[RMDB]
RNA sequence: GGGAACGACUCGAGUAGAGUCGAAAACCGGCCUACCAGGCAAGGAUGACUAGGUUUGAAAAAAGCUUGAUUCAAGUACAUUUUCAAAUCAGUCAAUUACUAACAAAAUGAUAAAAUAGGCUGAGACCACUAUCCGGAAGUUCGCUUCCGGAUAGUGAAAAGAAACAACAACAACAAC
Reactivity to DMS in 0.01 (KOAc 150mM, MgCl2 10mM, bicine 150mM(pH8.5), 24C), signal-to-noise 2, nucleotides 027 to 126: c110c000g010g050c010c000u010a000c110c070a190g030g000c180a130a110g000g000a070u000g010a020c000u020a080g000g000u000u030u030g000a000a000a000a060a100a140g000c000u000u000g000a300u010u070c040a000a000g000u000a110c210a300u000u000u000u000c010a010a000a010u020c000a000g010u030c030a020a210u000u030a140c030u040a060a120c220a050a000a070a300u000g000a140u010a090a060a140a210u000a000g000g000c000u000g000a040g030a070c090
Reactivity to 2A3 in 0.01 (KOAc 150mM, MgCl2 10mM, bicine 150mM(pH8.5), 24C), signal-to-noise 5, nucleotides 027 to 126: c000c000g010g000c000c000u020a070c050c060a050g070g030c090a070a020g040g030a060u040g010a010c000u050a150g010g010u010u000u010g020a000a010a000a000a000a000g040c020u100u030g070a300u300u300c020a020a000g000u010a030c040a230u000u000u010u010c000a010a000a000u000c010a000g010u000c010a000a010u090u040a080c010u070a120a040c020a110a070a050a060u140g080a120u100a150a100a070a050u060a020g000g000c000u030g030a010g050a080c050

Background:
An RNA of 177 nucleotides, treated with DMS and 2A3 and read out base by base. For DMS the reverse transcriptase was MarathonRT.